[RMDB]
RNA sequence: GGGAACGACUCGAGUAGAGUCGAAAAUCUUGCUUAGCUUUUCCAUCUAUAAUCUGUUGAGCAAAAUCUAUUAAUUGAUUUACUUCUGCCAUAUAUUGAGCUGUUGCUACUGAAUAUACUGGAAAUCCGCUGCAGCUAUGUUCGCAUAGCUGCAGCGAAAAGAAACAACAACAACAAC
Reactivity to 2A3 in 0.01 (KOAc 150mM, MgCl2 10mM, bicine 150mM(pH8.5), 24C), signal-to-noise 2, nucleotides 027 to 126: u000c030u000u040g040c030u120u010a060g000c050u000u000u120u000c070c020a050u090c060u050a170u090a160a160u040c030u030g100u050u130g170a070g040c000a020a020a020a020u000c040u060a160u250u140a300a070u050u060g040a010u080u040u160a040c140u080u040c050u080g090c090c000a030u050a000u040a010u190u120g050a000g000c040u070g020u130u020g020c000u020a040c000u000g030a030a000u060a020u010a050c100u050g010g060a030a030a030u040c030
This 177-nucleotide RNA was probed chemically with 2A3. It was measured as part of the RMDB library OK1LIB. The reactions ran in a buffer of 150 mM KOAc, 10 mM MgCl2 and 150 mM bicine (pH 8.5), at 24 C. For 2A3, 434 sequencing reads were counted.